An RNA of 207 nucleotides, treated with 2A3 and DMS and read out base by base.
The reactions ran in a buffer of 150 mM KOAc, 10 mM MgCl2 and 150 mM bicine (pH 8.5), at 24 C.

RNA sequence: GGGAACGACUCGAGUAGAGUCGAAAAAGUAGUGAAUACCUAACUGCCAUGAUGAUAAAUUCUUGAUUCAACGCGUCAACCAACGUCAUACGCUAGGAACAAUUGCAUGGUCUUAGAGUUGAACUGCUGGUCGGAAUAAUGUCCCUCCGUGAUUGAGGCUUAAUUACUGUUUCGACAGUAAUUAAGCAAAAGAAACAACAACAACAAC
Reactivity to 2A3 in 0.01 (KOAc 150mM, MgCl2 10mM, bicine 150mM(pH8.5), 24C), signal-to-noise 7, nucleotides 027 to 156: a000g010u030a010g010u000g110a130a030u070a110c010c010u030a050a060c070u100g010c000c010a040u040g020a050u030g020a040u120a180a190a130u170u080c080u140u110g100a240u080u120c070a070a010c080g000c010g020u030c040a040a090c100c010a060a080c080g080u070c050a070u080a230c030g010c020u040a040g050g080a030a010c020a050a080u080u100g030c010a010u000g020g000u020c030u030u050a050g010a000g060u010u030g020a030a010c010u020g010c010u040g000g060u060c020g000g080a080a070u210a160a090u170g060u050c000c000c000u010c020c010g030u070g070a170u090u100g060a060g150
Reactivity to DMS in 0.01 (KOAc 150mM, MgCl2 10mM, bicine 150mM(pH8.5), 24C), signal-to-noise 4, nucleotides 027 to 156: a040g040u000a010g040u000g010a180a140u000a070c010c020u000a040a040c080u020g030c010c020a070u000g020a110u000g020a110u010a040a050a130u000u000c030u000u010g020a160u010u000c030a080a050c070g040c090g000u020c090a050a300c080c030a030a020c020g000u000c040a100u000a070c090g010c040u000a050g010g020a030a030c050a060a150u000u010g020c100a080u000g010g010u000c300u000u000a040g010a060g020u000u000g000a090a030c040u010g030c010u010g010g010u010c020g010g010a050a040u000a050a110u000g020u000c010c000c010u010c030c040g030u000g020a170u000u010g010a170g010